[RMDB]
Source information: An RNA of 207 nucleotides, treated with DMS and 2A3 and read out base by base. For 2A3 the reverse transcriptase was SuperScript II with manganese. The data come from the RNA Mapping Database (RMDB), library OK3TST.
RNA sequence: GGGAACGACUCGAGUAGAGUCGAAAAGAGGCGAAAUAAUUCCCAUCUCCUUUGUACGGCCGGAGAUGGGUUUGGCCGUACUAAUAAGCCUCAUAGUGACGAGAGUCACGAAUUCUGGAUAGCCUUUGGUAGUCGGCUAUCCUCUGACUACCGUAGAAAUCGAUGCAGUAUUCGUACUGCAUCGAUUAAAAGAAACAACAACAACAAC
Reactivity to DMS in 0.01 (KOAc 150mM, MgCl2 10mM, bicine 150mM(pH8.5), 24C), signal-to-noise 1, nucleotides 027 to 156: g020a040g000g020c020g000a140a080a130u000a110a260u020u000c010c030c010a200u000c030u000c010c030u000u020u000g020u000a040c030g030g030c020c000g060g010a060g050a170u010g010g000g020u000u000u000g040g000c000c010g000u000a140c020u000a070a110u000a180a260g010c020c000u000c060a190u010a230g030u000g010a030c010g010a290g010a300g000u000c000a030c010g010a080a170u020u000c040u020g000g020a150u020a090g010c020c000u000u010u010g050g000u000a050g050u000c050g000g000c080u000a070u010c120c060u010c000u010g000a040c010u000a020c000c000g000u000a050g000a060
Reactivity to 2A3 in 0.01 (KOAc 150mM, MgCl2 10mM, bicine 150mM(pH8.5), 24C), signal-to-noise 2, nucleotides 027 to 156: g010a000g010g000c000g060a050a050a080u200a040a100u080u020c020c030c010a030u030c060u110c020c000u060u030u080g020u000a010c000g000g000c000c010g090g010a060g030a090u300g100g000g000u040u020u030g010g020c010c010g000u000a010c000u000a040a020u040a040a010g010c000c000u040c000a020u090a000g020u040g000a000c010g010a010g010a010g130u020c000a000c040g020a010a060u180u060c050u130g000g020a020u010a040g010c010c000u130u060u040g090g000u050a090g090u060c050g010g000c010u000a040u040c000c020u000c030u010g000a000c000u040a070c050c010g030u040a060g060a000